RNA sequence: GGGAACGACUCGAGUAGAGUCGAAAAGAAUAAAUCCCUCCCUCCCAAACGCGCGCAAAUAAAGGGAGGUCAACAGGGAUGAGUAGGCCUUUUGGCCAUAACCCAAAAGCGCGCGACGGCGCAAGAAACGGGAUAAAUCGUUCGCGAUUUAUCCCGUAAAAGAAACAACAACAACAAC
Reactivity to 2A3 in 0.01 (KOAc 150mM, MgCl2 10mM, bicine 150mM(pH8.5), 24C), signal-to-noise 1, nucleotides 027 to 126: g050a060a040u300a000a160a000u000c000c000c000u030c000c000c000u000c000c000c030a050a130a070c110g030c000g000c020g000c000a010a110a090u130a110a180a000g000g000g000a000g080g000u080c030a000a130c000a090g000g000g030a010u010g000a050g060u110a090g000g110c000c000u140u130u120u150g000g000c000c000a020u090a000a020c010c000c000a000a150a000a000g000c020g000c020g050c000g000a000c020g010g300c040g000c030a060a140g150a240a140
Reactivity to DMS in 0.01 (KOAc 150mM, MgCl2 10mM, bicine 150mM(pH8.5), 24C), signal-to-noise 1, nucleotides 027 to 126: g000a260a190u010a200a080a070u000c000c000c000u000c180c020c010u010c000c000c000a100a250a160c090g000c060g010c000g000c000a060a050a000u000a040a130a100g000g000g010a030g000g110u000c120a020a040c300a010g140g000g000a000u010g000a240g000u010a070g010g000c010c030u000u000u050u110g010g000c000c000a030u030a090a030c000c000c000a000a070a120a060g000c010g000c000g000c020g000a190c050g000g000c010g000c100a130a000g000a010a070

This 177-nucleotide RNA was probed chemically with 2A3 and DMS. Conditions: 150 mM KOAc, 10 mM MgCl2 and 150 mM bicine (pH 8.5), 24 C. Source: RMDB library OK1LIB, as collected in RNAgym. For 2A3 the reverse transcriptase was SuperScript II with manganese. The 2A3 profile rests on 514 reads.